Structure probing data (DMS) for a 177-nucleotide construct. The RNA was probed in 150 mM KOAc, 10 mM MgCl2 and 150 mM bicine (pH 8.5) at 24 C.
RNA sequence: GGGAACGACUCGAGUAGAGUCGAAAACAGCAAUCCCUGCGCGCCAAGGUGCAUGCAGAAGAGUUGGAGCGGCAGAAGCUUGACAGGGCCAAGCAGGACGCCGCCAGAGAGCUGAGGCGGCGCGAAGCGGAAUGGAACCGUUCGCGGUUCCAUUCCGAAAAGAAACAACAACAACAAC
Reactivity to DMS in 0.01 (KOAc 150mM, MgCl2 10mM, bicine 150mM(pH8.5), 24C), signal-to-noise 1, nucleotides 027 to 126: c070a140g000c140a190a150u010c010c040c040u000g000c050g000c080g030c030c010a090a190g030g000u030g000c090a020u030g010c010a080g000a090a070g030a180g040u000u000g050g000a220g030c050g020g070c020a020g000a250a210g000c030u050u000g000a200c080a220g030g000g000c040c020a000a060g060c010a040g000g020a140c070g040c000c000g000c000c040a180g000a040g020a180g050c000u000g000a220g000g010c120g030g050c030g010c030g020a060a100g030